[RMDB]
RNA sequence: GGGAACGACUCGAGUAGAGUCGAAAAACAAUUCGUCCUGACUGCCUCGGGUACUCUCACAUCUAAGUCGGUUGAGUUGAACCUAACGACCCAGUUUGACGUACAGGACCGAGCGAGACCUUUUGGGAUUGGGCGUAAUGUCUACUUUGCUAGUCCGUCCACACUGUGCUUUCGAGCACAGUGUGGAAAAAGAAACAACAACAACAAC
Reactivity to 2A3 in 0.01 (KOAc 150mM, MgCl2 10mM, bicine 150mM(pH8.5), 24C), signal-to-noise 1, nucleotides 027 to 156: a010c020a030a210u110u000c030g030u000c000c000u030g060a020c010u060g000c000c080u040c020g070g020g000u100a070c000u010c000u010c030a020c010a130u160c040u220a140a030g170u020c010g000g070u060u000g100a060g020u000u060g060a020a040c000c030u040a030a000c030g080a100c010c000c000a000g020u020u020u090g030a070c090g000u080a020c000a020g060g000a000c000c020g010a040g000c050g000a020g010a020c000c000u040u190u290u300g010g010g010a000u170u080g010g000g030c030g020u060a170a000u020g000u020c000u020a060c060u090u220u020g010c020u050a000g030u080c070c000g020